[RMDB]
RNA sequence: GGGAACGACUCGAGUAGAGUCGAAAAGAUGUGUUUAUUAAAGAGUAUGAACGUGCCCUGUACGAAGCUUUUGGUUUCGAUGUCGAGCUACUUGAAAUGUGGAUGGAAGGCGAGUACAACGCUUACGAAAGCAUUUAACUUUCGAGUUAAAUGCUUUAAAAGAAACAACAACAACAAC
Reactivity to DMS in 0.01 (KOAc 150mM, MgCl2 10mM, bicine 150mM(pH8.5), 24C), signal-to-noise 8, nucleotides 027 to 126: g010a100u010g010u000g010u000u000u010a050u010u000a090a100a120g010a130g010u000a050u010g000a040a080c050g010u000g000c020c010c020u010g010u000a080c040g000a070a130g000c030u000u010u000u000g020g010u000u000u010c020g010a100u010g010u000c050g010a070g010c080u000a030c060u000u000g000a040a050a080u010g020u010g010g010a090u010g010g020a050a070g000g000c020g000a160g010u000a040c080a050a080c150g010c060u000u000a090c200g000
Reactivity to 2A3 in 0.01 (KOAc 150mM, MgCl2 10mM, bicine 150mM(pH8.5), 24C), signal-to-noise 3, nucleotides 027 to 126: g040a040u090g080u020g030u060u020u060a160u060u150a140a150a020g080a060g100u130a040u140g020a040a020c030g000u020g020c000c020c000u000g020u040a040c040g050a090a000g000c010u000u100u180u170g110g000u040u070u050c020g050a030u070g050u080c030g000a040g020c040u050a020c020u080u030g050a020a060a070u160g040u090g070g020a040u050g080g000a000a010g010g000c020g000a000g010u000a030c040a100a030c070g030c020u060u030a020c060g210